[RMDB]
RNA sequence: GGGAACGACUCGAGUAGAGUCGAAAAGAGGAGGUCGAAAUGGAAGUCGCCACCGAGGCCGGGAUCCGCCCCGGCGGCCGGCCCUUCGUCAACGUCGUCGCCGAUAACGCCGAACAGGAGUACGGGUCGGCCCGUAUGCGGCGGCUGCGGAUCCUCGAAAAAGUAAAUCAUUCGUGAUUUACUUUUUAAAAGAAACAACAACAACAAC
Reactivity to DMS in 0.01 (KOAc 150mM, MgCl2 10mM, bicine 150mM(pH8.5), 24C), signal-to-noise 2, nucleotides 027 to 156: g000a090g010g000a040g010g040u000c040g010a060a100a220u000g010g030a260a070g010u000c010g040c000c020a050c020c030g020a110g030g020c010c030g030g000g020a070u000c100c100g020c060c010c030c020g020g020c020g030g060c000c020g030g040c030c010c010u020u010c010g030u000c020a030a100c070g000u000c110g010u000c000g010c030c020g040a260u000a060a020c020g000c010c000g020a070a060c050a220g010g000a180g020u000a060c120g020g000g010u000c030g000g000c000c030c030g030u000a060u010g040c020g010g040c020g000g020c000u000g020c040g000g000a090u010c010c010u010c030g010
Reactivity to 2A3 in 0.01 (KOAc 150mM, MgCl2 10mM, bicine 150mM(pH8.5), 24C), signal-to-noise 1, nucleotides 027 to 156: g040a000g010g020a030g020g110u110c050g050a100a070a070u230g040g050a050a010g030u030c010g010c030c000a020c030c030g030a050g020g070c030c020g030g010g000a050u020c020c020g070c040c000c000c000g000g000c010g000g000c020c010g000g000c000c000c000u040u010c020g090u010c010a120a080c030g040u020c010g000u010c020g010c060c000g040a110u190a160a040c020g000c010c000g040a110a040c020a080g100g050a020g040u120a020c060g010g040g000u040c010g050g070c010c000c010g050u060a070u150g040c020g000g020c000g000g010c010u010g010c010g000g030a020u040c000c000u020c020g000
The record gives the reactivity of an RNA of 207 nucleotides to DMS and 2A3. Values are in units of 0.01, from 0 to 300, in steps of 10. Source: RMDB library OK3TST, as collected in RNAgym. DMS adducts were read by reverse transcription with MarathonRT. 2A3 adducts were read by reverse transcription with SuperScript II with manganese.